[RMDB]
Chemical mapping of a 177-nucleotide RNA with DMS and 2A3. DMS adducts were read by reverse transcription with MarathonRT.
RNA sequence: GGGAACGACUCGAGUAGAGUCGAAAAGAUAUGGAAGAUAAAAGUCUUCAACAGCAUGGUCUCGGAAACGAGAGCCAUGACAUGAAGUCGCUAUCUUCCUAAGUCAAAACAGGGGUUCGCCCCUGAACAGUUUCCAUAACUUCGGUUAUGGAAACUGAAAAGAAACAACAACAACAAC
Reactivity to DMS in 0.01 (KOAc 150mM, MgCl2 10mM, bicine 150mM(pH8.5), 24C), signal-to-noise 2, nucleotides 027 to 126: g010a070u000a300u010g010g000a020a010g020a020u000a010a070a180a220g000u010c000u010u000c010a080a060c080a190g000c020a000u000g010g010u000c000u010c000g000g010a060a060a180c000g000a000g020a060g010c010c000a020u000g000a030c050a260u010g010a020a010g000u010c020g030c190u000a010u000c000u000u000c000c000u010a000a130g000u000c050a080a020a080a200c020a010g000g000g000g010u020u010c300g040c010c000c000c010u000g000a020a130
Reactivity to 2A3 in 0.01 (KOAc 150mM, MgCl2 10mM, bicine 150mM(pH8.5), 24C), signal-to-noise 2, nucleotides 027 to 126: g000a000u070a010u120g000g000a000a000g020a020u010a050a300a030a100g010u000c010u000u000c060a090a090c070a080g080c010a010u010g000g000u010c000u000c000g020g040a120a130a050c010g010a000g020a010g110c000c010a000u000g060a020c030a040u160g010a000a000g010u020c030g030c120u010a000u010c010u010u000c000c000u000a110a010g040u020c040a000a040a100a230c000a010g040g020g000g030u060u060c210g210c040c000c010c010u010g000a000a000